[RMDB]
RNA sequence: GGGAACGACUCGAGUAGAGUCGAAAAUAUUGGCUACUAUGUAAGCCAUAUUCAUACCGGAUCGUGUCAUGACUAUGAUACUCAUCAGGAUGGUGCCCACCCGCCCGGCAUGCGCCCGUCACUCUGUGGCAGUUCAAGAGUUCGCUCUUGAACUGCCAAAAGAAACAACAACAACAAC
Reactivity to 2A3 in 0.01 (KOAc 150mM, MgCl2 10mM, bicine 150mM(pH8.5), 24C), signal-to-noise 1, nucleotides 027 to 126: u060a030u030u170g000g000c000u000a000c050u060a000u300g150u160a160a000g000c000c000a000u020a000u000u090c000a000u020a170c000c010g000g010a030u040c030g000u030g030u010c000a040u070g090a100c080u180a070u090g000a020u010a040c000u000c080a070u000c030a000g080g000a010u060g050g000u080g010c000c000c000a000c040c030c000g000c020c000c000g000g040c030a010u040g010c000g020c020c000c000g030u000c000a050c040u000c040u030g100u030

Source information:
The record gives the reactivity of an RNA of 177 nucleotides to 2A3. The reactions ran in a buffer of 150 mM KOAc, 10 mM MgCl2 and 150 mM bicine (pH 8.5), at 24 C.